[RMDB]
RNA sequence: GGGAACGACUCGAGUAGAGUCGAAAAUGGCAAAAUAAGAGGUACAAUUUGAGUUUGAACCUUCACUACUCUCAAGCCGAUCCAAGACUUGGGAGACCAAUUUGGGAGAGUUGGUACUCUGGGAUCACAGCCUAUUAGGUUUCGACCUAAUAGGCUGAAAAGAAACAACAACAACAAC
Reactivity to 2A3 in 0.01 (KOAc 150mM, MgCl2 10mM, bicine 150mM(pH8.5), 24C), signal-to-noise 2, nucleotides 027 to 126: u060g040g000c010a010a110a030a000u180a160a070g000a040g050g010u070a040c020a030a030u080u070u300g150a150g100u040u010u060g040a050a030c010c000u070u060c060a040c100u120a020c010u020c000u000c020a000a010g020c000c010g050a010u010c020c010a040a080g070a090c020u070u100g040g010g000a020g000a010c000c000a020a020u030u030u050g040g000g000a040g000a000g050u010u010g010g010u080a130c040u080c060u050g000g060g000a010u030c030a010
Reactivity to DMS in 0.01 (KOAc 150mM, MgCl2 10mM, bicine 150mM(pH8.5), 24C), signal-to-noise 3, nucleotides 027 to 126: u000g020g020c110a100a040a120a100u040a160a060g000a030g010g000u000a060c040a050a050u000u000u010g000a180g000u010u000u000g000a100a050c030c020u000u000c110a090c110u010a120c010u010c000u000c020a020a020g010c030c050g000a070u010c060c080a070a160g000a040c020u000u000g000g000g000a030g000a070c070c020a020a060u000u000u010g010g020g000a150g000a080g000u000u000g000g000u000a090c040u010c080u000g000g000g000a060u010c120a190
Annotation
An RNA of 177 nucleotides, treated with 2A3 and DMS and read out base by base. 2A3 adducts were read by reverse transcription with SuperScript II with manganese. For 2A3, 1,584 sequencing reads were counted. For DMS, 1,809 sequencing reads were counted.